Chemical mapping of a 177-nucleotide RNA with 2A3 and DMS.

[RMDB]
RNA sequence: GGGAACGACUCGAGUAGAGUCGAAAAUAAUGCCAUUUUACAGAACUGUAACGCAAAGGUCUUUUUCAAGGAGUCUGAAAAGGCAGUUGCUGUAAAUCUUGAACCGAACGCUUAAUGAUUUUUUAACCGAUAGCAAUUAGUUCGCUAAUUGCUAUCGAAAAGAAACAACAACAACAAC
Reactivity to 2A3 in 0.01 (KOAc 150mM, MgCl2 10mM, bicine 150mM(pH8.5), 24C), signal-to-noise 3, nucleotides 027 to 126: u190a000a070u110g030c010c000a070u070u070u020u000a010c010a010g020a020a010c000u030g020u080a220a050c050g000c130a120a060a030g040g020u060c000u010u040u010u060u100c030a080a050g090g000a030g100u030c010u080g050a070a060a040a000g040g000c000a000g000u000u060g120c010u010g010u030a030a020a000u020c040u050u140g050a030a030c040c010g040a080a020c050g050c090u070u160a110a040u160g070a130u060u080u070u090u100u180a060a060c030
Reactivity to DMS in 0.01 (KOAc 150mM, MgCl2 10mM, bicine 150mM(pH8.5), 24C), signal-to-noise 4, nucleotides 027 to 126: u010a100a090u010g010c040c060a140u010u000u000u000a030c030a030g010a050a030c020u000g020u000a110a100c140g020c120a050a140a150g010g010u000c010u000u000u000u010u030c230a090a140g010g000a070g000u000c020u000g010a030a030a090a120g000g000c010a010g000u000u000g020c000u000g000u000a020a020a030u010c080u010u000g010a070a110c080c050g000a080a060c130g010c080u000u000a070a060u000g010a000u000u000u010u000u000u000a070a200c220
Source: RMDB library OK2TST, as collected in RNAgym. The RNA was probed in 150 mM KOAc, 10 mM MgCl2 and 150 mM bicine (pH 8.5) at 24 C. For 2A3 the reverse transcriptase was SuperScript II with manganese. For DMS, 3,353 sequencing reads were counted.